This 177-nucleotide RNA was probed chemically with 2A3 and DMS.
High DMS reactivity at an A or C suggests that its Watson-Crick edge is free.
The 2A3 profile rests on 2,473 reads.
[RMDB]
RNA sequence: GGGAACGACUCGAGUAGAGUCGAAAAGAUAUGGAGGAAGGUAGGGAGUCGUCUCUCGGAAACGAGAGAACGACUUUGAUCUAUGCUUCCUCCUAAGUCAAAAUGGUUACUCCUUCGGGAGUAACCAGACUGGACCUAAGUUCGCUUAGGUCCAGUCAAAAGAAACAACAACAACAAC
Reactivity to 2A3 in 0.01 (KOAc 150mM, MgCl2 10mM, bicine 150mM(pH8.5), 24C), signal-to-noise 1, nucleotides 027 to 126: g070a040u110a020u190g010g020a020g010g000a010a000g050g000u010a010g010g050g010a040g000u030c000g000u020c000u000c010u000c010g000g020a070a070a010c020g000a010g010a010g020a100a060c040g000a000c000u080u060u040g020a030u030c000u010a000u030g300c010u000u000c010c000u000c000c000u000a000a000g060u000c020a020a040a030a260u110g000g010u020u000a000c010u010c020c000u020u060c300g120g000g000a000g000u010a000a000c000c000a000
Reactivity to DMS in 0.01 (KOAc 150mM, MgCl2 10mM, bicine 150mM(pH8.5), 24C), signal-to-noise 1, nucleotides 027 to 126: g000a060u000a300u000g020g030a000g000g010a010a010g000g000u000a000g020g020g000a000g000u000c000g010u000c000u000c000u010c010g010g010a080a110a250c000g000a000g000a020g000a010a020c000g010a020c000u000u000u000g010a060u020c000u000a000u010g000c010u000u000c000c000u010c010c000u000a010a080g000u000c040a090a110a160a270u010g010g000u000u000a000c000u000c000c000u000u030c180g020g000g000a030g000u000a010a000c010c010a010

Notes:
Source: RMDB library TTRDES, as collected in RNAgym.